[RMDB]
RNA sequence: GGGAACGACUCGAGUAGAGUCGAAAACAAUCAUUUCGGAACUGUCUACUAUGUUAGACAAAAAUUCCAAUAUAGCGGACUCCACCGCAAACGUAAUCAAUACAGUUCAGGUAUCACAGCCCGAACUGGAUGCGACUCAGUUCGCUGAGUCGCAUCCAAAAGAAACAACAACAACAAC
Reactivity to 2A3 in 0.01 (KOAc 150mM, MgCl2 10mM, bicine 150mM(pH8.5), 24C), signal-to-noise 1, nucleotides 027 to 126: c140a000a130u080c090a110u040u080u130c110g010g000a080a010c030u000g000u000c000u000a010c000u070a000u270g020u220u060a000g020a000c000a000a130a000a000a000u000u060c000c000a080a000u300a040u080a110g000c000g010g010a050c030u000c040c000a030c030c000g000c020a000a030a000c020g030u040a140a140u010c030a130a100u290a300c000a020g000u000u000c000a030g000g000u100a020u240c080a150c030a000g000c010c010c000g000a010a000c010u000